[RMDB]
RNA sequence: GGGAACGACUCGAGUAGAGUCGAAAAUGAGUCGGUCUGGACUUAUGAAUUGGGAGUUAUCCUUACUACCGUGCAUGUAUCGUGGUAGCGAUAUGGCGGUACUACUGCUAUACAGUGAAGUGCCAGUGAAUGACUUUAAUGCUCAAAGUGCUAGCCGCGAUCCUAGAUGAUUCGUCAUCUAGGAUCGAAAAGAAACAACAACAACAAC
Reactivity to DMS in 0.01 (KOAc 150mM, MgCl2 10mM, bicine 150mM(pH8.5), 24C), signal-to-noise 2, nucleotides 027 to 156: u000g010a070g030u000c000g030g000u020c040u010g020g000a050c050u000u000a070u020g030a100a130u000u000g000g020g040a050g000u010u010a070u000c040c020u000u000a070c090u000a060c010c010g030u000g040c060a210u000g010u010a040u000c050g040u000g020g020u010a060g020c070g010a110u010a060u000g030g010c020g030g010u000a010c060u010a060c010u000g000c010u030a100u020a130c020a040g000u010g000a090a060g000u000g040c040c020a060g020u010g010a070a050u000g010a060c010u000u000u000a110a100u010g000c050u000c060a050a060a120g020u000g020c050u000a090g030c030c080g000
Reactivity to 2A3 in 0.01 (KOAc 150mM, MgCl2 10mM, bicine 150mM(pH8.5), 24C), signal-to-noise 7, nucleotides 027 to 156: u160g010a000g020u050c020g010g070u040c050u070g020g010a030c010u080u090a080u230g110a120a100u120u130g010g030g010a040g050u140u140a120u180c020c000u040u090a050c030u030a020c010c030g060u090g130c090a160u140g030u120a030u050c010g000u000g120g070u120a060g030c000g020a020u010a040u100g050g000c000g010g000u000a010c010u020a010c000u010g040c030u060a040u040a200c030a050g020u040g140a060a020g020u040g160c020c040a010g000u030g120a140a060u080g020a010c000u030u070u070a100a080u100g020c020u020c090a070a070a020g070u110g050c040u060a030g040c020c030g050
Source: RMDB library OK3TST, as collected in RNAgym. The record gives the reactivity of an RNA of 207 nucleotides to DMS and 2A3. 2A3 is a SHAPE reagent: it acylates the 2'-hydroxyl of flexible nucleotides of all four kinds. Reactivities are given for positions 27 through 156. DMS adducts were read by reverse transcription with MarathonRT. For 2A3, 4,352 sequencing reads were counted. Conditions: 150 mM KOAc, 10 mM MgCl2 and 150 mM bicine (pH 8.5), 24 C.